Chemical mapping of a 177-nucleotide RNA with DMS.
For DMS the reverse transcriptase was MarathonRT.
Reactivities are given for positions 27 through 126.
The reactions ran in a buffer of 150 mM KOAc, 10 mM MgCl2 and 150 mM bicine (pH 8.5), at 24 C.
RNA sequence: GGGAACGACUCGAGUAGAGUCGAAAAGAUAUGGACUUACGAGGACAUGGACACGACGAAGCUAAUGAGGUUCGGAAACGAACCUCAUUAGCAGAGUGUUUGUCUACCCACCGUAAGUCCUAAGUCACUUUACUGUCACGUUCGCGUGACAGUAAAGAAAAGAAACAACAACAACAAC
Reactivity to DMS in 0.01 (KOAc 150mM, MgCl2 10mM, bicine 150mM(pH8.5), 24C), signal-to-noise 1, nucleotides 027 to 126: g000a090u010a300u030g020g000a010c000u000u000a010c000g010a220g000g020a040c130a090u000g000g050a030c000a050c280g030a080c080g000a300a240g000c020u000a000a000u000g080a030g000g030u040u000c000g000g000a090a070a300c000g020a000a020c000c000u000c000a000u000u000a000g020c000a000g000a300g020u000g000u000u030u010g000u010c000u000a040c180c020c000a250c080c020g000u000a040a010g030u000c000c000u000a030a010g000u000c040a240